The record gives the reactivity of an RNA of 177 nucleotides to DMS and 2A3. The data come from the RNA Mapping Database (RMDB), library TTRDEL. The DMS profile rests on 1,268 reads.
RNA sequence: GGGAACGACUCGAGUAGAGUCGAAAAGAUAUGGACCUGAAGAGCGCACUAAUACUCGGAAACGAGUAUUCCCUGAACUACGCUCUUACAGGUCCUAAGUCAAAACUUCCCACUUCGGUGGGAAGAACGUACUAUGCGACUUCGGUCGCAUAGUACGAAAAGAAACAACAACAACAAC
Reactivity to DMS in 0.01 (KOAc 150mM, MgCl2 10mM, bicine 150mM(pH8.5), 24C), signal-to-noise 2, nucleotides 027 to 126: g000a050u000a300u000g000g000a010c010c010u030g010a050a030g000a020g000c010g030c110a050c240u000a040a040u020a000c000u000c000g010g000a040a130a110c010g020a010g000u000a020u000u000c140c080c030u010g000a180a090c180u000a110c030g000c000u000c000u000u010a030c020a020g000g010u000c000c010u000a020a040g020u000c010a080a040a100a190c010u000u000c010c000c000a000c010u000u020c120g010g010u000g050g000g000a000a000g000a020a060
Reactivity to 2A3 in 0.01 (KOAc 150mM, MgCl2 10mM, bicine 150mM(pH8.5), 24C), signal-to-noise 1, nucleotides 027 to 126: g030a000u030a010u060g000g000a010c000c000u010g020a020a000g010a000g000c200g000c130a020c050u060a020a020u020a010c000u000c020g000g010a060a010a010c000g010a000g000u010a030u030u030c060c060c010u040g060a070a060c060u230a070c210g000c000u030c000u000u030a130c030a000g040g000u030c000c000u010a010a000g000u010c020a000a000a030a120c020u000u000c020c010c010a000c020u020u030c300g120g000u020g000g000g010a000a010g010a010a020